Source: RMDB library M2PK50, as collected in RNAgym. Chemical mapping of a 177-nucleotide RNA with 2A3 and DMS. For 2A3 the reverse transcriptase was SuperScript II with manganese. DMS adducts were read by reverse transcription with MarathonRT. The RNA was probed in 150 mM KOAc, 10 mM MgCl2 and 150 mM bicine (pH 8.5) at 24 C.
RNA sequence: GGGAACGACUCGAGUAGAGUCGAAAAACCUAUGGAUUCGUCCAUAGGUGCUGGCGCGCGGCCUUUGUCCUGUCGCGUGUGCGUGGUGGGCGAAAUACGCGCAAUAGUGACAAUUCGUUGUCACUAAACCUCACAUAUGAUUCGUCAUAUGUGAGGUAAAAGAAACAACAACAACAAC
Reactivity to 2A3 in 0.01 (KOAc 150mM, MgCl2 10mM, bicine 150mM(pH8.5), 24C), signal-to-noise 9, nucleotides 027 to 126: a000c000c000u000a010u000g010g000a010u030u100c190g040u030c080c000a000u000a000g000g010u010g050c090u060g080g090c040g000c000g000c000g030g040c020c000u050u040u050g060u090c010c010u030g020u050c000g010c010g070u180g170u200g160c020g000u030g020g020u030g010g000g000c020g000a010a020a030u140a040c010g010c000g000c010a010a080u090a040g000u000g000a000c000a000a020u040u040c210g110u110u010g000u000c000a000c000u010a140a080
Reactivity to DMS in 0.01 (KOAc 150mM, MgCl2 10mM, bicine 150mM(pH8.5), 24C), signal-to-noise 9, nucleotides 027 to 126: a020c000c000u000a000u000g000g000a030u000u010c190g010u000c000c000a010u000a010g000g010u000g010c110u000g010g020c080g000c010g010c020g010g000c090c110u000u000u000g010u010c020c020u000g010u000c010g020c000g020u010g020u000g020c020g040u000g010g010u000g010g000g000c020g000a020a040a080u000a080c020g010c010g010c050a130a130u000a010g000u000g000a020c000a010a040u000u010c220g010u000u000g010u000c000a010c000u000a010a070